[RMDB]
RNA sequence: GGGAACGACUCGAGUAGAGUCGAAAAGGCGCUGCCGAAGUUGGCGCUGCCGAGGUUUGCAAAGCCGAUGUUGUAGUCGCCGAGGUUUGCAAUGCCGACGUUGAGGGUGCCGUGGUUUGCCAAGCCCUCAGCAUACGUGGUUCGCCACGUAUGCUGAAAAAGAAACAACAACAACAAC
Reactivity to 2A3 in 0.01 (KOAc 150mM, MgCl2 10mM, bicine 150mM(pH8.5), 24C), signal-to-noise 4, nucleotides 027 to 126: g050g000c010g000c030u220g170c020c040g060a090a030g040u090u110g030g000c020g000c010u000g010c000c000g000a060g020g000u130u130u080g020c020a090a050a030g020c040c040g090a130u180g100u080u050g070u050a070g050u080c050g010c040c040g020a010g010g010u040u170u180g010c030a090a090u250g020c000c000g010a020c020g040u030u200g060a190g020g020g010u020g000c000c010g020u080g050g000u020u020u070g030c010c000a030a020g000c000c000c000
Reactivity to DMS in 0.01 (KOAc 150mM, MgCl2 10mM, bicine 150mM(pH8.5), 24C), signal-to-noise 3, nucleotides 027 to 126: g000g000c000g030c010u010g000c050c010g000a050a110g010u020u030g000g040c000g020c010u010g000c020c040g010a300g000g010u000u060u020g040c040a030a050a070g020c070c050g000a050u000g000u040u020g030u000a020g020u030c160g000c030c000g030a220g010g000u010u010u020g000c000a080a090u060g020c010c000g010a100c090g000u000u030g000a040g000g000g020u000g000c040c050g010u000g010g010u010u010u080g010c010c020a060a180g000c010c010c010
This 177-nucleotide RNA was probed chemically with 2A3 and DMS. For 2A3 the reverse transcriptase was SuperScript II with manganese. Values cover nucleotides 27 to 126.